Source: RMDB libraries RFM100 and RFMREP, as collected in RNAgym. Structure probing data (2A3 and DMS) for a 177-nucleotide construct. Values cover nucleotides 27 to 126. For 2A3 the reverse transcriptase was SuperScript II with manganese.
RNA sequence: GGGAACGACUCGAGUAGAGUCGAAAACGCACUUCACCAAUGGUGGAGUCGUAGACCCCAUGGAACCGCAGCCAGAUGACAAACAGCAGGGCUGCGUAACCUAAGGUGAGGAGGUGGUGACCGAGGAUACUCUCUCCGAAUUCGUUCGGAGAGAGUAAAAAGAAACAACAACAACAAC
Reactivity to 2A3 in 0.01 (KOAc 150mM, MgCl2 10mM, bicine 150mM(pH8.5), 24C), signal-to-noise 3, nucleotides 027 to 126: c010g010c020a010c020u010u000c000a020c010c020a160a300u300g010g000u000g000g000a000g000u000c000g000u000a010g110a050c000c000c000c020a070u110g010g010a020a040c070c020g000c000a000g010c000c000a150g070a240u090g040a110c070a100a300a030c020a060g090c020a050g020g030g000c000u000g000c000g000u010a000a000c000c010u010a090a070g020g030u040g020a050g010g020a030g000g030u070g030g010u070g020a010c020c020g020a070g040g000a020
Reactivity to DMS in 0.01 (KOAc 150mM, MgCl2 10mM, bicine 150mM(pH8.5), 24C), signal-to-noise 6, nucleotides 027 to 126: c010g000c180a010c010u000u000c000a000c000c020a130a190u060g000g050u010g000g010a000g010u000c000g010u000a080g020a120c030c010c000c110a080u030g000g000a040a200c300c010g000c000a020g010c000c010a090g010a160u020g020a120c190a110a120a150c200a090g020c090a090g030g010g000c010u010g000c030g010u000a010a170c020c010u030a100a100g000g000u010g010a080g000g000a060g000g010u000g010g010u000g000a080c050c060g010a080g000g010a200